The record gives the reactivity of an RNA of 177 nucleotides to 2A3 and DMS. Conditions: 150 mM KOAc, 10 mM MgCl2 and 150 mM bicine (pH 8.5), 24 C. The DMS profile rests on 1,949 reads. Reactivities are given for positions 27 through 126. For 2A3 the reverse transcriptase was SuperScript II with manganese.
[RMDB]
RNA sequence: GGGAACGACUCGAGUAGAGUCGAAAACUUUGGUGAGGCCCUAUCUAGUAUAGCAAUCCACCAAGCAGGUGAGUUCACACAAUUCAGGUUCUCACAGAAAAUGCGCCCUGACUUGACAGGUAUGGUCAGCAGGGUGCUAUUUCGAUAGCACCCUGCUAAAAGAAACAACAACAACAAC
Reactivity to 2A3 in 0.01 (KOAc 150mM, MgCl2 10mM, bicine 150mM(pH8.5), 24C), signal-to-noise 2, nucleotides 027 to 126: c020u020u000u080g030g000u050g010a060g020g000c060c000c010u030a030u000c040u040a090g120u190a090u000a000g080c090a040a000u000c000c000a000c000c000a010a030g060c040a020g050g060u020g000a010g000u010u010c020a020c000a010c050a240a130u160u140c060a110g000g010u030u040c000u000c000a000c000a000g170a020a070a030a030u070g030c030g070c030c000c000u020g000a080c020u090u030g000a000c000a050g020g110u220a120u120g080g000u040c030
Reactivity to DMS in 0.01 (KOAc 150mM, MgCl2 10mM, bicine 150mM(pH8.5), 24C), signal-to-noise 2, nucleotides 027 to 126: c050u000u000u000g000g070u000g030a010g000g010c240c300c020u000a050u000c020u090a120g010u040a070u020a000g050c070a040a300u050c080c010a000c010c000a000a030g000c110a040g000g020u000g000a010g000u000u010c030a050c160a130c230a080a090u030u010c190a060g020g000u000u000c000u000c000a000c010a110g000a040a070a060a090u020g000c000g050c090c020c000u000g000a070c160u000u020g040a100c030a030g070g030u060a080u000g040g000u000c040